[RMDB]
RNA sequence: GGGAACGACUCGAGUAGAGUCGAAAAGAUAGCUUCGGCUAUCAAAAUGCAGGAACUUGUGAGUCUCCUAUUGAAAAUGAACGGGAGACUGGUGAGUUCCCGGGAAAAAGAACUAGUUCGCUAGUUCGAUAUAUCCUGACUUCGGUCAGGAUAUAUCAAAAGAAACAACAACAACAAC
Reactivity to DMS in 0.01 (KOAc 150mM, MgCl2 10mM, bicine 150mM(pH8.5), 24C), signal-to-noise 2, nucleotides 027 to 126: g000a000u000a000g000c000u000u020c160g030g000c010u000a000u000c000a040a070a070a110u010g010c120a090g010g010a010a010c010u000u000g030u000g010a040g000u000c000u000c010c000u000a100u010u000g010a070a080a150a120u020g020a060a050c170g010g000g000a000g010a000c000u000g010g030u000g000a000g000u000u000c000c000c020g020g010g010a050a040a070a120a180g000a010a010c000u000a020g010u000u030c250g030c020u000a020g010u000u000c010
Reactivity to 2A3 in 0.01 (KOAc 150mM, MgCl2 10mM, bicine 150mM(pH8.5), 24C), signal-to-noise 2, nucleotides 027 to 126: g000a010u010a000g010c010u040u040c220g050g000c000u000a000u000c000a050a080a000a020u210g030c030a020g000g000a010a000c000u040u000g020u070g160a010g000u000c010u010c010c010u050a150u060u210g150a210a130a060a170u120g020a080a010c050g010g010g000a010g000a000c000u010g000g000u030g000a010g000u000u000c000c010c010g050g020g060a070a180a010a010a030g010a010a010c010u010a000g010u040u040c160g010c090u000a010g000u000u020c000
The record gives the reactivity of an RNA of 177 nucleotides to DMS and 2A3. The RNA was probed in 150 mM KOAc, 10 mM MgCl2 and 150 mM bicine (pH 8.5) at 24 C. DMS adducts were read by reverse transcription with MarathonRT. Source: RMDB library RFMREP, as collected in RNAgym.